The record gives the reactivity of an RNA of 177 nucleotides to 2A3 and DMS. The data come from the RNA Mapping Database (RMDB), library TTRDEL. The DMS profile rests on 1,176 reads.
RNA sequence: GGGAACGACUCGAGUAGAGUCGAAAAGAUAUGGAAUCCCAAGGGAGCGUACUCGGAAACGAGACGCAUCGAUCUUGCGGAUUCCUAAGUCAAAACCAUUCCUUAUUGUUCGCAAUAAGGAAUGGAACUCCAUUCGUAGGUUCGCCUACGAAUGGAGAAAAGAAACAACAACAACAAC
Reactivity to 2A3 in 0.01 (KOAc 150mM, MgCl2 10mM, bicine 150mM(pH8.5), 24C), signal-to-noise 2, nucleotides 027 to 126: g010a010u040a050u140g000g020a000a000u000c000c000c000a000a000g080g010g000a030g020c020g040u140a300c060u020c020g010g040a040a040a030c030g010a000g000a000c000g000c030a020u220c020g010a050u010c000u000u040g020c290g000g000a020u000u000c010c010u000a040a010g000u010c030a000a010a070a140c000c000a000u000u000c000c000u020u000a020u040u000g100u050u090c300g000c150a000a010u000a000a000g000g000a010a000u000g000g000a010a010
Reactivity to DMS in 0.01 (KOAc 150mM, MgCl2 10mM, bicine 150mM(pH8.5), 24C), signal-to-noise 1, nucleotides 027 to 126: g000a040u010a300u000g000g010a010a010u000c000c000c000a020a010g000g000g010a010g040c010g020u010a160c010u000c000g010g000a060a060a150c000g020a010g020a050c000g000c000a120u000c130g010a060u010c000u000u010g040c220g020g000a020u000u000c000c000u010a000a010g000u000c020a090a080a090a150c000c000a030u010u000c000c000u010u000a000u010u000g030u000u000c220g030c010a000a000u000a010a000g020g010a000a010u000g010g000a000a080
About this RNA: Conditions: 150 mM KOAc, 10 mM MgCl2 and 150 mM bicine (pH 8.5), 24 C.